[RMDB]
RNA sequence: GGGAACGACUCGAGUAGAGUCGAAAAACGAUAGCUCUACGGAGCUAUCGAACCCCUCAACGUUAGAGGUCCCUUGGUGGCUGUAUCUAUCGAUGUCGCUUCACAGGAUACCCAUUGAGGCUAGAAAGUGAGUACAAAGAUUCGUCUUUGUACUCACAAAAGAAACAACAACAACAAC
Reactivity to DMS in 0.01 (KOAc 150mM, MgCl2 10mM, bicine 150mM(pH8.5), 24C), signal-to-noise 7, nucleotides 027 to 126: a070c020g010a010u000a010g010c010u000c000u000a150c180g010g000a020g020c000u010a000u000c000g000a020a030c040c020c000c060u000c060a060a100c140g010u010u020a060g010a140g010g000u010c160c010c020u000u000g010g010u000g000g000c170u040g020u000a010u000c010u000a090u030c170g010a100u000g000u020c270g020c120u000u010c030a070c160a260g000g000a050u010a020c010c010c020a070u010u010g010a010g010g020c160u020a060g000a070a090a110
Reactivity to 2A3 in 0.01 (KOAc 150mM, MgCl2 10mM, bicine 150mM(pH8.5), 24C), signal-to-noise 9, nucleotides 027 to 126: a000c010g000a000u000a000g000c000u000c000u010a090c290g110g000a000g000c010u000a000u000c000g000a000a000c010c000c000c000u040c030a100a200c100g080u140u150a060g020a050g090g040u110c020c010c000u020u060g040g000u030g030g020c140u140g020u040a030u010c040u030a100u140c110g090a080u060g120u160c090g030c160u100u070c050a050c010a060g020g010a020u040a050c000c000c000a000u010u040g010a020g030g000c030u040a060g120a090a090a010